[RMDB]
RNA sequence: GGGAACGACUCGAGUAGAGUCGAAAAGAGGUCUCCUUGCCUCGGAUUGCCAUCCGAAACGUACGCGGAGAUAGCAUGCGAAAGGAUGGCGUGGAUGGGAAAGCAUGCACAAGGUGGCCCGUACGGAAACCAUCCUAACCUGGAUGGGAAAGCAUGCCGAGAUCAGAACAUUCGUGUUCUGAUCUCGAAAAGAAACAACAACAACAAC
Reactivity to DMS in 0.01 (KOAc 150mM, MgCl2 10mM, bicine 150mM(pH8.5), 24C), signal-to-noise 1, nucleotides 027 to 156: g000a090g020g030u010c000u020c040c000u000u000g020c060c000u020c020g000g010a160u000u020g040c030c000a070u000c020c000g000a120a100a190c060g030u000a000c030g070c010g010g020a300g050a150u020a010g020c030a060u000g000c000g000a070a090a300g000g020a040u010g010g020c000g050u010g030g000a080u020g010g010g000a160a170a150g010c030a020u010g000c000a280c030a020a060g000g050u000g020g000c010c010c020g000u000a100c070g000g000a060a080a120c020c000a000u010c000c010u030a110a200c170c120u000g000g000a030u020g020g000g010a050a010a070g000c000a020u000g030c000
Reactivity to 2A3 in 0.01 (KOAc 150mM, MgCl2 10mM, bicine 150mM(pH8.5), 24C), signal-to-noise 3, nucleotides 027 to 156: g110a010g000g010u000c030u030c030c000u020u020g030c000c000u040c040g000g090a160u100u220g000c020c000a000u000c000c010g060a090a100a100c020g020u030a020c040g000c040g070g070a120g030a190u130a060g020c020a040u120g000c020g100a150a020a030g010g010a000u000g000g010c010g000u030g050g040a090u140g010g020g040a060a060a040g000c000a010u010g000c000a010c000a030a020g020g000u020g080g020c000c040c090g040u090a030c040g040g050a060a050a000c010c010a000u000c000c010u060a110a080c070c040u030g000g000a000u010g000g030g000a060a020a030g030c010a020u010g000c000

This 207-nucleotide RNA was probed chemically with DMS and 2A3. For DMS the reverse transcriptase was MarathonRT. The RNA was probed in 150 mM KOAc, 10 mM MgCl2 and 150 mM bicine (pH 8.5) at 24 C. For DMS, 2,234 sequencing reads were counted.